[RMDB]
RNA sequence: GGGAACGACUCGAGUAGAGUCGAAAACUUAUGAGAGAGUGGUUACCUCUCACGCCCCCUCCACCGUUGGGGGUGCCCUAUUCGGAGCACUGCAGUUUCGAUAGAAAGGCUAAGCACUUCGCAAUGACAUUAACUAUUACUUCGGUAAUAGUUAAUGAAAAGAAACAACAACAACAAC
Reactivity to DMS in 0.01 (KOAc 150mM, MgCl2 10mM, bicine 150mM(pH8.5), 24C), signal-to-noise 9, nucleotides 027 to 126: c090u000u010a080u000g000a020g000a020g010a040g010u000g010g010u010u000a170c220c000u000c010u000c010a080c090g010c020c000c000c000c010u010c100c150a120c240c170g000u010u000g010g000g010g020g040u000g000c010c030c010u000a110u000u000c040g010g010a040g010c020a070c170u010g010c140a110g010u000u000u000c010g010a060u010a070g000a080a080a070g010g000c150u000a040a070g010c040a060c050u000u000c050g010c090a060a070u000g010a250
Reactivity to 2A3 in 0.01 (KOAc 150mM, MgCl2 10mM, bicine 150mM(pH8.5), 24C), signal-to-noise 7, nucleotides 027 to 126: c040u130u120a080u170g010a010g000a000g000a000g020u040g020g080u080u070a020c000c000u000c000u000c010a010c000g020c000c000c010c010c010u020c040c030a210c040c030g070u080u030g000g000g000g000g010u010g000c010c000c000u060a070u030u080c020g020g000a020g010c010a030c150u250g030c050a090g020u020u010u040c010g010a020u020a050g110a040a090a000g040g000c030u040a070a040g040c020a030c060u090u090c080g020c100a060a170u110g030a030
Chemical mapping of a 177-nucleotide RNA with DMS and 2A3. For DMS the reverse transcriptase was MarathonRT. For 2A3 the reverse transcriptase was SuperScript II with manganese. The RNA was probed in 150 mM KOAc, 10 mM MgCl2 and 150 mM bicine (pH 8.5) at 24 C. For 2A3, 13,080 sequencing reads were counted.